RNA sequence: GGGAACGACUCGAGUAGAGUCGAAAAAGCAGGCGAUACGUCGCCUGCAAUGGGAUACCCUAGCAGGGCCGCACCCCAGAAAAGCGGCCCCGCCCCACACCCGGAGCGGCAGUUACGACCGCCGCAAUAUACAACUCCUUCUUCGGAAGGAGUUGAACAGUAAGCAGUAGUUCGCUACUGCUUACUGAAAAGAAACAACAACAACAAC
Reactivity to 2A3 in 0.01 (KOAc 150mM, MgCl2 10mM, bicine 150mM(pH8.5), 24C), signal-to-noise 1, nucleotides 027 to 156: a000g000c010a040g000g070c010g000a010u040a060c130g040u010c000g000c040c000u000g000c010a000a050u040g000g000g000a040u180a270c040c020c040u010a040g010c020a000g010g000g020c010c000g000c000a200c020c050c040c040a030g270a080a120a080a020g000c010g000g030c000c000c000c000g010c000c000c000c000a060c010a070c040c050c010g090g040a040g000c010g010g000c010a000g040u090u040a060c160g040a070c160c000g010c010c010g000c010a010a000u250a030u080a090c010a010a010c000u000c000c000u010u000c000u050u070c100g100g000a010a000g000g010a000g000u010u000g000a000a000
An RNA of 207 nucleotides, treated with 2A3 and read out base by base. It was measured as part of the RMDB library M2RFPK. Values cover nucleotides 27 to 156. For 2A3 the reverse transcriptase was SuperScript II with manganese.